[RMDB]
RNA sequence: GGGAACGACUCGAGUAGAGUCGAAAAAGAUGGGGUUUCACCAUGUUGGCCAGGCUGGUCUCGAAAUCCUGACCUCGUGAUCUGCCGGCCUUGGCCUCCCGAAGUGCUGGGAUUACAAGCGUGAGCCAGUCUAAUCGUAAUUCGUUACGAUUAGACUAAAAGAAACAACAACAACAAC
Reactivity to DMS in 0.01 (KOAc 150mM, MgCl2 10mM, bicine 150mM(pH8.5), 24C), signal-to-noise 9, nucleotides 027 to 126: a060g010a080u010g010g010g010g010u000u000u000c050a120c030c030a060u010g010u000u000g010g010c010c010a050g010g010c020u000g010g000u000c060u000c070g010a040a060a090u000c040c040u000g000a070c100c060u000c050g000u000g000a110u000c060u010g010c010c010g000g010c010c010u000u000g010g010c020c040u000c010c000c010g010a080a070g010u000g010c030u000g010g000g010a080u000u000a050c090a050a070g010c060g020u000g010a070g010c040c060
Reactivity to 2A3 in 0.01 (KOAc 150mM, MgCl2 10mM, bicine 150mM(pH8.5), 24C), signal-to-noise 6, nucleotides 027 to 126: a020g150a050u120g020g010g020g060u080u150u080c050a050c020c010a020u110g070u090u100g040g000c010c030a050g000g000c010u020g000g040u040c030u030c080g050a070a060a050u090c030c040u060g080a110c010c020u030c020g020u050g020a070u020c030u080g000c010c000g010g000c000c000u010u070g010g010c000c000u000c010c000c000g030a090a020g060u090g050c050u100g010g000g060a070u100u080a080c040a130a010g020c040g090u050g050a010g040c020c010